[RMDB]
RNA sequence: GGGAACGACUCGAGUAGAGUCGAAAACUUGGAGAUUCGUUAAUGUCUUAUGUUGUAGGCAUGGGAUGUUCUUUAACAGGAGUACUCGCUGCAUUUAGAUCCGUAAUAGACGAUUCUUUUGAAGCCACUACCCCUUCCAUUUCGAUGGAAGGGGUAGAAAAGAAACAACAACAACAAC
Reactivity to 2A3 in 0.01 (KOAc 150mM, MgCl2 10mM, bicine 150mM(pH8.5), 24C), signal-to-noise 2, nucleotides 027 to 126: c010u010u090g070g010a030g020a020u060u020c020g030u060u130a160a070u110g030u100c010u020u120a050u110g090u080u100g070u080a060g020g090c040a010u040g000g030g000a040u050g060u050u060c010u010u110u050a100a060c100a120g010g020a030g060u020a050c000u030c070g060c030u040g000c000a020u090u060u070a040g010a060u010c050c040g000u070a050a080u010a070g100a050c020g040a060u030u000c010u060u030u010u130g050a050a010g010c000c000a030
Reactivity to DMS in 0.01 (KOAc 150mM, MgCl2 10mM, bicine 150mM(pH8.5), 24C), signal-to-noise 3, nucleotides 027 to 126: c030u000u000g000g000a050g000a030u010u010c030g020u000u020a100a050u010g010u010c050u000u000a050u010g030u000u000g010u010a050g020g010c030a060u000g030g010g010a030u010g000u000u000c090u000u000u020a080a140c150a050g000g010a100g000u000a050c120u000c030g000c050u000g000c060a050u000u000u000a090g010a060u000c060c060g000u010a070a100u010a110g010a060c050g010a050u000u000c020u000u000u010u010g020a030a110g000c070c060a230

Structure probing data (2A3 and DMS) for a 177-nucleotide construct. It was measured as part of the RMDB library OK2TRN. Values are in units of 0.01, from 0 to 300, in steps of 10. DMS adducts were read by reverse transcription with MarathonRT. For 2A3 the reverse transcriptase was SuperScript II with manganese. The reactions ran in a buffer of 150 mM KOAc, 10 mM MgCl2 and 150 mM bicine (pH 8.5), at 24 C.